An RNA of 207 nucleotides, treated with 2A3 and read out base by base. Values cover nucleotides 27 to 156. For 2A3 the reverse transcriptase was SuperScript II with manganese. The reactions ran in a buffer of 150 mM KOAc, 10 mM MgCl2 and 150 mM bicine (pH 8.5), at 24 C. Values are in units of 0.01, from 0 to 300, in steps of 10.

RNA sequence: GGGAACGACUCGAGUAGAGUCGAAAAUCGGUUGUUUCUCUGAAGGCAUGAUCACCCCGUCCGAUGAGGAAGUUCGUGCUUCCGUCGAACGCGAAAGUCGGACGGCGGCCAUGAGUCGCAACGCAAAUAUACAUUUAGUAGUUCGCUACUAAAUGAACUACGAUGAACGGUUCGCCGUUCAUCGUAGAAAAGAAACAACAACAACAAC
Reactivity to 2A3 in 0.01 (KOAc 150mM, MgCl2 10mM, bicine 150mM(pH8.5), 24C), signal-to-noise 1, nucleotides 027 to 156: u100c090g020g000u000u000g000u020u000u000c030u010c040u050g120a240a030g050g000c020a020u090g010a030u080c040a060c010c020c000c000g000u000c000c010g020a020u060g000a050g080g080a020a020g030u090u230c240g130u200g100c000u030u000c000c030g120u090c030g030a080a060c010g060c030g170a090a090a080g010u000c010g000g010a000c020g000g000c010g000g030c000c020a030u070g060a060g070u070c090g000c070a020a000c010g010c070a010a120a000u220a030u030a120c000a000u000u000u000a020g000u000a010g000u000u090c210g000c070u000a020c000u000a000a000a000u020g000a000a020